[RMDB]
Background: An RNA of 207 nucleotides, treated with DMS and 2A3 and read out base by base. DMS adducts were read by reverse transcription with MarathonRT. Source: RMDB library OK3TST, as collected in RNAgym. Reactivities are given for positions 27 through 156. 2A3 adducts were read by reverse transcription with SuperScript II with manganese.
RNA sequence: GGGAACGACUCGAGUAGAGUCGAAAAAGCGUGGCCAACAUGGUGAAACCCUGUCUCCACUAAAAAAGAUAUAAAAAUUUGCCAGGCAUGGUGGCGCAUGCCUGUAGUCCCAUCUACUCGGGAGGCUGAGGCAGGAGGAUCGCUUGAACCCGGGAGAGCGAUUAGUGAUAUUCGUAUCACUAAUCGCAAAAGAAACAACAACAACAAC
Reactivity to DMS in 0.01 (KOAc 150mM, MgCl2 10mM, bicine 150mM(pH8.5), 24C), signal-to-noise 1, nucleotides 027 to 156: a060g030c020g070u010g010g000c030c060a050a100c110a030u000g000g010u000g000a130a040a150c030c020c010u000g000u000c020u000c010c080a130c060u020a000a050a050a080a180a130g000a160u010a170u010a010a070a080a020a120u020u000u000g010c230c000a020g010g010c000a010u010g000g050u010g050g010c220g010c020a020u000g000c040c000u000g000u010a040g010u010c010c000c010a090u000c080u010a180c030u020c040g000g000g000a070g040g030c000u020g000a020g010g020c030a040g000g010a100g010g000a110u000c030g010c000u010u000g000a030a070c040c020c010g010g020g030a180g010a290
Reactivity to 2A3 in 0.01 (KOAc 150mM, MgCl2 10mM, bicine 150mM(pH8.5), 24C), signal-to-noise 2, nucleotides 027 to 156: a020g050c030g030u050g050g000c000c020a070a060c070a290u180g030g000u090g060a100a010a000c010c010c010u010g020u000c010u030c010c010a080c100u130a020a040a080a010a080a000g060a010u130a010u190a160a170a040a040a040u130u110u130g060c020c010a010g000g000c020a000u000g020g000u060g030g040c030g000c040a000u010g000c000c000u010g000u040a010g030u010c000c010c000a060u050c040u080a110c040u020c040g000g000g040a020g080g000c050u040g000a010g000g010c000a000g020g000a020g030g020a030u050c010g010c000u000u010g020a040a040c000c010c020g010g040g000a070g000a010